This 207-nucleotide RNA was probed chemically with 2A3 and DMS. The DMS profile rests on 4,507 reads. It was measured as part of the RMDB library OK3TST. The RNA was probed in 150 mM KOAc, 10 mM MgCl2 and 150 mM bicine (pH 8.5) at 24 C. The 2A3 profile rests on 15,525 reads.
[RMDB]
RNA sequence: GGGAACGACUCGAGUAGAGUCGAAAAGUCACGAGGAGACUCGUGACAGCAUGCUUCGGCAUGCAAGGGUCGGCAUGGCAUCUCCACCUCCUCGCGGUCCGACCUGGGCAUCCGAAGGAGGACGCACGUCCACUCGGAUGUUCAAGGGAGAGCCAAAACUAUGACGAUUAUUCGUAAUCGUCAUAGUAAAAGAAACAACAACAACAAC
Reactivity to 2A3 in 0.01 (KOAc 150mM, MgCl2 10mM, bicine 150mM(pH8.5), 24C), signal-to-noise 6, nucleotides 027 to 156: g010u000c020a000c010g000a010g030g030a060g010a040c000u000c000g000u000g000a000c000a000g000c000a000u000g000c000u070u040c220g140g000c000a000u000g000c030a010a030g030g000g000u000c010g000g020c030a060u130g030g000c020a200u030c010u000c000c000a010c000c000u050c010c020u080c040g020c050g000g000u000c000c010g000a000c000c000u000g000g000g000c000a000u000c010c010g040a090a040g030g050a200g020g010a020c040g090c120a130c240g010u000c000c000a010c000u000c000g000g000a000u000g000u000u000c000a000a000g000g000g000a000g000a000g000c000c000a020a010a010
Reactivity to DMS in 0.01 (KOAc 150mM, MgCl2 10mM, bicine 150mM(pH8.5), 24C), signal-to-noise 2, nucleotides 027 to 156: g010u000c000a000c020g030a020g000g020a290g000a240c040u000c010g010u010g000a010c040a090g000c000a000u000g000c020u000u010c300g020g000c000a000u000g040c000a050a050g010g020g020u000c030g000g000c040a280u000g020g000c060a100u000c010u000c000c000a090c010c010u000c020c020u000c010g020c250g000g010u010c030c000g000a060c010c020u000g000g000g010c000a040u000c000c000g010a050a170g000g000a160g050g010a030c000g010c140a120c180g020u000c000c000a070c040u000c010g020g010a030u010g010u010u000c010a030a030g000g040g030a050g000a180g000c020c000a030a050a140